[RMDB]
This 177-nucleotide RNA was probed chemically with 2A3 and DMS. The 2A3 profile rests on 1,053 reads. For DMS the reverse transcriptase was MarathonRT. Conditions: 150 mM KOAc, 10 mM MgCl2 and 150 mM bicine (pH 8.5), 24 C. High DMS reactivity at an A or C suggests that its Watson-Crick edge is free.
RNA sequence: GGGAACGACUCGAGUAGAGUCGAAAAACGCGCUAAUGAUAAUAUCUUAUCAGUUAGAUUCACUGCUAACAAAAUUGUUGGUGGUGCUCCUACAUGGUUUAAUGCGUUGCGUGACUUUACGUUAAAGCGAUACCGGAUAGUUCGCUAUCCGGUAUCGAAAAGAAACAACAACAACAAC
Reactivity to 2A3 in 0.01 (KOAc 150mM, MgCl2 10mM, bicine 150mM(pH8.5), 24C), signal-to-noise 2, nucleotides 027 to 126: a010c010g000c010g030c050u030a050a000u050g020a040u020a060a070u120a090u130c120u080u040a030u030c010a070g010u080u060a010g010a040u070u030c000a000c000u010g000c020u020a010a000c030a040a090a270a300u210u120g000u000u000g000g040u000g020g000u000g000c020u030c000c000u030a050c010a070u150g020g090u070u060u150a040a020u160g010c010g010u040u040g030c060g030u050g030a060c060u070u050u060a020c040g090u010u150a150a030a000g060
Reactivity to DMS in 0.01 (KOAc 150mM, MgCl2 10mM, bicine 150mM(pH8.5), 24C), signal-to-noise 2, nucleotides 027 to 126: a050c040g020c030g000c060u000a030a050u010g000a010u000a040a050u000a300u020c170u010u000a020u010c040a030g010u000u000a010g000a090u000u000c030a020c000u000g000c000u000a010a020c000a050a140a210a150u010u000g000u000u000g010g010u000g000g020u000g010c300u000c010c020u000a050c130a130u010g030g000u010u000u020a050a080u010g010c030g020u000u000g020c100g000u030g000a080c070u000u000u020a020c100g010u000u020a050a100a070g020